RNA sequence: GGGAACGACUCGAGUAGAGUCGAAAAAUUGAGGAAGCAAAACAGAAGGAAUUAAAUGAAGAAGAGGGGGCGGUGUUCUUUGACUAACUACACUAAUGCAAAGGCGUUAGUUGAGGAAAUCAUCAAUAAGCUAAAAGAAUCUGGUGUUAAAGUUAAACUAUCUCCAAAAGUUCGCUUUUGGAGAUAGAAAAGAAACAACAACAACAAC
Reactivity to 2A3 in 0.01 (KOAc 150mM, MgCl2 10mM, bicine 150mM(pH8.5), 24C), signal-to-noise 2, nucleotides 027 to 156: a000u070u050g020a010g000g020a030a010g010c020a000a010a020a120c020a040g070a050a030g050g000a030a020u130u100a090a080a160u140g010a000a050g030a030a020g000a060g000g000g010g000g000c010g000g000u020g000u040u030c010u000u020u020g010a010c000u000a030a010c000u040a030c060a020c070u070a130a090u150g110c050a220a090a000g100g010c020g010u020u020a000g000u000u030g000a000g000g010a020a030a040u100c010a000u020c010a010a090u100a090a050g020c020u070a170a040a000a020g040a050a000u080c040u080g040g000u010g020u040u030a130a040a060g000u090u040a000a000a000
Reactivity to DMS in 0.01 (KOAc 150mM, MgCl2 10mM, bicine 150mM(pH8.5), 24C), signal-to-noise 1, nucleotides 027 to 156: a100u020u010g080a080g030g010a030a020g010c060a100a130a090a120c090a130g010a050a090g060g000a170a170u000u000a020a050a100u000g000a130a060g000a030a090g000a070g030g020g030g010g020c060g000g020u000g000u010u000c000u000u000u010g030a050c130u020a040a070c020u000a070c080a200c050u010a020a070u000g030c120a130a110a090g070g000c090g010u000u000a020g060u000u000g010a040g020g000a000a080a100u000c010a020u000c090a030a030u010a070a070g030c110u010a030a050a110a180g010a050a030u020c070u020g020g000u000g030u000u000a040a100a090g010u000u030a090a110a140